An RNA of 177 nucleotides, treated with DMS and 2A3 and read out base by base.
For DMS the reverse transcriptase was MarathonRT.
Values cover nucleotides 27 to 126.
The RNA was probed in 150 mM KOAc, 10 mM MgCl2 and 150 mM bicine (pH 8.5) at 24 C.
For DMS, 1,459 sequencing reads were counted.
[RMDB]
RNA sequence: GGGAACGACUCGAGUAGAGUCGAAAAGCCUGGCGCGCCAGAUGGCGGACGUGGACGGCCUGAAGAAAUUGGCCGCGCGCCUGGAGAAGGUCGCCGACGAUGUGACCGAGGCCUACACGGACUGGGCGACCAAGCACACAUUCGUGUGUGCUUGGUCAAAAGAAACAACAACAACAAC
Reactivity to DMS in 0.01 (KOAc 150mM, MgCl2 10mM, bicine 150mM(pH8.5), 24C), signal-to-noise 2, nucleotides 027 to 126: g020c020c000u000g010g020c100g030c010g020c000c120a220g010a070u020g010g040c010g020g010a090c020g000u000g000g000a180c230g000g000c000c000u000g020a140a080g010a060a070a050u000u020g000g020c030c040g040c080g030c050g000c000c000u000g010g000a160g010a150a120g000g030u000c010g020c010c020g010a090c090g000a130u010g010u020g000a120c040c040g010a080g000g000c010c010u010a290c030a020c030g010g000a110c050u010g010g020g000c080
Reactivity to 2A3 in 0.01 (KOAc 150mM, MgCl2 10mM, bicine 150mM(pH8.5), 24C), signal-to-noise 1, nucleotides 027 to 126: g020c000c000u040g040g000c110g000c010g070c060c030a170g140a300u280g050g000c020g010g030a020c020g030u020g020g030a050c100g020g040c000c000u080g070a160a100g060a030a130a000u120u050g010g040c000c000g010c030g000c050g000c000c000u020g000g060a190g010a070a030g020g000u040c020g030c060c020g000a010c070g130a110u070g020u000g080a000c040c040g000a020g000g030c000c000u040a020c010a000c010g040g010a030c010u010g020g010g040c060